An RNA of 177 nucleotides, treated with DMS and read out base by base. For DMS the reverse transcriptase was MarathonRT. The reactions ran in a buffer of 150 mM KOAc, 10 mM MgCl2 and 150 mM bicine (pH 8.5), at 24 C. Values are in units of 0.01, from 0 to 300, in steps of 10. For DMS, 1,147 sequencing reads were counted.
RNA sequence: GGGAACGACUCGAGUAGAGUCGAAAAGAUAUGGAAGAAUUGAGACAUGCUCCUCGGAAACGAGUGAGCAACAGCUCAUUCUUCCUAAGUCAAAAGACUCUGCACUACUUCGGUAGUGCAGAGUCAACAAGGAGCGAAAGUUCGCUUUCGCUCCUUGAAAAGAAACAACAACAACAAC
Reactivity to DMS in 0.01 (KOAc 150mM, MgCl2 10mM, bicine 150mM(pH8.5), 24C), signal-to-noise 1, nucleotides 027 to 126: g020a080u000a300u030g000g000a010a000g000a020a010u000u010g000a010g010a100c090a200u010g000c010u010c020c000u000c000g000g020a070a040a080c020g000a010g000u030g020a000g010c010a000a000c280a110g010c010u010c000a060u000u000c000u010u000c010c000u000a000a060g000u000c020a110a100a110a090g000a030c000u000c000u000g000c020a020c020u010a000c000u000u010c250g000g010u000a000g000u000g000c020a000g010a000g000u000c000a020a080